[RMDB]
The record gives the reactivity of an RNA of 207 nucleotides to DMS and 2A3. Source: RMDB library RNAMAK, as collected in RNAgym. The DMS profile rests on 5,001 reads. Conditions: 150 mM KOAc, 10 mM MgCl2 and 150 mM bicine (pH 8.5), 24 C. 2A3 adducts were read by reverse transcription with SuperScript II with manganese.

RNA sequence: GGGAACGACUCGAGUAGAGUCGAAAACAGGACUUCGGUCCUGAGCUUUGAUAUGGAUCCGAUAGUUCCUUGGAUUUACCACCUCCCUUCGGAAACGAACUAGGUGGUUGUCAGGAACUAGCGGAUCCUAAGUCUCCAAGUAUGAUUCGUCAUACAAUUCACAUAGGUUUUUCGAAACCUAUGUGAAAAAAGAAACAACAACAACAAC
Reactivity to DMS in 0.01 (KOAc 150mM, MgCl2 10mM, bicine 150mM(pH8.5), 24C), signal-to-noise 2, nucleotides 027 to 156: c020a010g020g010a030c000u010u000c300g080g020u000c000c000u000g000a050g010c090u010u000u000g000a190u000a130u000g000g000a010u000c000c000g020a000u000a030g010u000u000c000c000u000u010g040g030a060u010u000u000a050c020c010a010c000c010u000c120c050c090u000u030c030g010g010a200a100a300c000g030a030a030c040u000a050g040g070u010g020g040u010u000g020u000c010a050g020g010a010a010c010u000a000g000c000g020g010a020u010c010c000u000a000a050g010u010c020u000c030c030a150a230g020u000a010u000g010a090u000u000c290g010u000c010a020u000a000c010a140a300
Reactivity to 2A3 in 0.01 (KOAc 150mM, MgCl2 10mM, bicine 150mM(pH8.5), 24C), signal-to-noise 5, nucleotides 027 to 156: c000a000g000g010a000c000u080u160c300g130g000u000c000c000u000g010a010g060c040u120u140u140g060a070u060a070u180g010g000a010u000c000c000g020a020u000a000g000u000u000c010c000u030u090g190g000a050u210u200u260a020c000c000a000c000c000u040c010c020c000u040u030c020g010g050a070a090a080c010g010a000a010c110u040a090g000g010u010g000g000u000u010g010u000c000a010g000g000a000a000c000u000a000g000c000g000g010a000u000c000c000u010a000a000g000u000c000u000c030c030a140a070g000u000a000u010g030a020u050u210c280g070u020c100a000u020a000c010a030a100